[RMDB]
RNA sequence: GGGAACGACUCGAGUAGAGUCGAAAAACAGUCAUUACGCUGACUGAGGGAAACGGGAGCCGGGCUUGGGACAAGAGCCAUCCCAAGUCCAAGGCCAAGUAGGCUCUAGUGAUGGUACGCCAUCACAAAAACUGGUCUACCUUCGGGUAGACCAGAACUUUCUCCCGUACUUCGGUACGGGAGAAAGAAAAGAAACAACAACAACAAC
Reactivity to 2A3 in 0.01 (KOAc 150mM, MgCl2 10mM, bicine 150mM(pH8.5), 24C), signal-to-noise 1, nucleotides 027 to 156: a010c000a000g020u000c020a060u000u300a110c090g060c130u010g000a010c010u010g010a050g060g010g050a110a150a120c150g060g010g020a050g020c030c030g000g010g010c000u010u000g030g000g010a000c020a040a040g000a020g030c020c000a010u010c000c000c000a000a000g000u000c000c000a070a020g020g010c000c000a060a020g050u140a090g040g000c010u000c010u040a020g000u000g000a000u000g000g000u020a020c250g020c000c000a000u010c000a000c010a000a070a000a000a000c000u000g000g000u030c000u000a000c000c000u050u100c270g060g000g000u010a000g000a000c000c000a000g000a000a000